RNA sequence: GGGAACGACUCGAGUAGAGUCGAAAAAUACACCAGCAGUAGGACUCAGCGACCGUCACAACAAGGUUGUGCUGGUAUCCGACGGUCGUAUAGCCUUGUCUUGCAGGUUGCCUUGCACUGACGUGCCACACCAUUUACAGAUUCGUCUGUAAAUGAACAUUAGUGUCGUGUUCGCACGACACUAAUGAAAAGAAACAACAACAACAAC
Reactivity to DMS in 0.01 (KOAc 150mM, MgCl2 10mM, bicine 150mM(pH8.5), 24C), signal-to-noise 2, nucleotides 027 to 156: a100u010a070c060a200c020c000a110g030c030a030g040u000a070g010g050a070c020u010c090a140g020c010g000a010c030c000g000u000c030a170c100a080a100c100a090a090g000g000u000u010g050u000g040c000u000g000g030u000a070u020c050c010g000a030c010g030g000u000c020g020u000a060u000a040g020c000c020u000u010g000u000c050u000u000g010c020a110g070g010u010u000g030c040c150u000u010g020c010a070c000u010g010a090c180g030u000g010c030c050a100c060a110c120c000a000u000u000u000a020c000a020g010a100u000u000c300g010u000c010u000g010u000a000a000a000u030g000a070a180
Reactivity to 2A3 in 0.01 (KOAc 150mM, MgCl2 10mM, bicine 150mM(pH8.5), 24C), signal-to-noise 4, nucleotides 027 to 156: a000u140a030c060a010c020c010a000g010c010a010g020u170a040g020g040a180c010u020c050a000g000c000g000a000c010c000g010u010c010a100c040a300a090c080a300a130g030g000u020u010g020u030g020c010u020g000g000u010a040u040c010c030g010a000c000g000g000u000c000g000u020a020u040a020g000c010c000u020u090g020u030c030u020u040g010c010a020g020g050u140u140g070c020c010u020u050g000c010a050c070u080g030a020c040g040u050g040c010c030a100c000a030c040c000a010u000u000u000a000c000a000g020a040u020u120c160g110u020c060u020g000u000a000a000a000u010g000a030a020
The record gives the reactivity of an RNA of 207 nucleotides to DMS and 2A3. DMS adducts were read by reverse transcription with MarathonRT. For 2A3, 4,331 sequencing reads were counted. Source: RMDB library M2RFPK, as collected in RNAgym. Conditions: 150 mM KOAc, 10 mM MgCl2 and 150 mM bicine (pH 8.5), 24 C. 2A3 adducts were read by reverse transcription with SuperScript II with manganese. As a SHAPE reagent, 2A3 marks flexible, mostly unpaired nucleotides at the ribose 2'-OH.